[RMDB]
RNA sequence: GGGAACGACUCGAGUAGAGUCGAAAAUGCAUACCAGGGGCUCGCGCGGACCAACCCUACUUGGACAUCAUUGCCUACUUGUGGACCAACAGCAAAGUGGCCUUCGGGCUACAAUUUGCGGCGCCCGCAAGUUGAGGACAUUCGUGUCCUCAACUUGAAAAGAAACAACAACAACAAC
Reactivity to DMS in 0.01 (KOAc 150mM, MgCl2 10mM, bicine 150mM(pH8.5), 24C), signal-to-noise 4, nucleotides 027 to 126: u010g010c090a080u010a150c040c040a100g040g000g000g000c060u000c090g010c080g020c050g010g010a070c070c060a090a130c060c020c010u000a060c080u000u010g010g010a090c090a040u010c090a060u000u010g010c010c020u000a050c060u010u000g010u000g000g000a070c040c020a090a060c100a120g000c010a010a020a080g020u000g000g000c000c010u000u010c150g020g010g020c000u000a010c020a070a100u000u000u000g000c010g000g020c110g000c020c000c020g020
Reactivity to 2A3 in 0.01 (KOAc 150mM, MgCl2 10mM, bicine 150mM(pH8.5), 24C), signal-to-noise 2, nucleotides 027 to 126: u060g020c010a020u040a190c020c040a080g070g000g030g000c010u020c060g090c010g030c030g040g020a060c040c000a040a040c000c020c030u050a060c060u060u090g040g010a050c000a040u070c010a030u010u130g010c000c000u050a080c020u050u040g010u070g030g040a070c010c020a040a060c050a040g020c010a010a020a050g020u020g020g000c000c000u050u040c150g080g000g000c000u010a010c020a040a170u050u010u040g000c020g010g030c020g010c020c000c000g040

Source: RMDB library OK2TST, as collected in RNAgym.
Chemical mapping of a 177-nucleotide RNA with DMS and 2A3.
For 2A3 the reverse transcriptase was SuperScript II with manganese.
The reactions ran in a buffer of 150 mM KOAc, 10 mM MgCl2 and 150 mM bicine (pH 8.5), at 24 C.